[RMDB]
RNA sequence: GGGAACGACUCGAGUAGAGUCGAAAAAGUGUGCCCUUUCCUUCUUGACUUUUUAGCAGUUCUGGGUAAAUAUUGAUUUGCCCCCAGUUUACCUUCUCCCUGACUGGCCAUUUGCAGACUCAGGAACAUCACGAUUAAGUUUCGACUUAAUCGUGAUAAAAGAAACAACAACAACAAC
Reactivity to 2A3 in 0.01 (KOAc 150mM, MgCl2 10mM, bicine 150mM(pH8.5), 24C), signal-to-noise 9, nucleotides 027 to 126: a000g140u120g040u070g050c000c000c000u010u030u010c010c000u040u050c020u070u090g060a110c030u040u070u030u050u150a050g020c040a050g020u060u040c030u060g020g010g020u040a020a030a020u230a090u110u220g180a120u060u050u100g030c000c000c000c000c000a030g010u020u060u040a060c010c010u060u050c030u050c030c000c000u010g050a050c000u020g020g050c020c030a150u080u070u100g010c010a010g000a060c030u020c040a010g040g030a010a040c060
Reactivity to DMS in 0.01 (KOAc 150mM, MgCl2 10mM, bicine 150mM(pH8.5), 24C), signal-to-noise 6, nucleotides 027 to 126: a070g000u010g020u010g000c020c010c020u000u010u010c030c020u000u000c030u010u000g000a100c060u000u000u010u010u010a110g010c100a080g010u000u010c060u010g010g010g020u000a020a020a050u000a130u020u010g000a110u010u010u010g010c040c020c020c050c030a060g010u000u000u010a050c070c020u010u000c070u000c040c020c020u000g000a060c040u000g010g010c060c080a090u020u020u010g010c050a080g010a080c100u010c050a070g000g010a060a080c210